[RMDB]
RNA sequence: GGGAACGACUCGAGUAGAGUCGAAAAGAUAUGGAAAGCGCCGAAUCCUACGGUCGGAAACGACCGAGGACAUGUGGAACUACGCUUUCCUAAGUCAAACGAGGGGGCACUUCGGUGCCCCCUCGAAGAUAAGUAGGUGGUUCGCCACCUACUUAUCAAAAGAAACAACAACAACAAC
Reactivity to DMS in 0.01 (KOAc 150mM, MgCl2 10mM, bicine 150mM(pH8.5), 24C), signal-to-noise 2, nucleotides 027 to 126: g000a020u010a170u010g010g010a000a000a010g000c000g030c010c060g010a140a130u000c000c000u000a130c010g010g000u000c000g010g010a080a020a100c000g000a010c000c000g000a030g010g000a030c300a030u010g020u000g020g020a130a100c050u030a140c040g010c000u000u000u000c010c000u000a000a080g010u000c040a110a080a240c030g000a030g000g060g060g050g060c010a020c000u000u000c160g030g030u010g020c000c000c000c000c000u000c010g010a010a080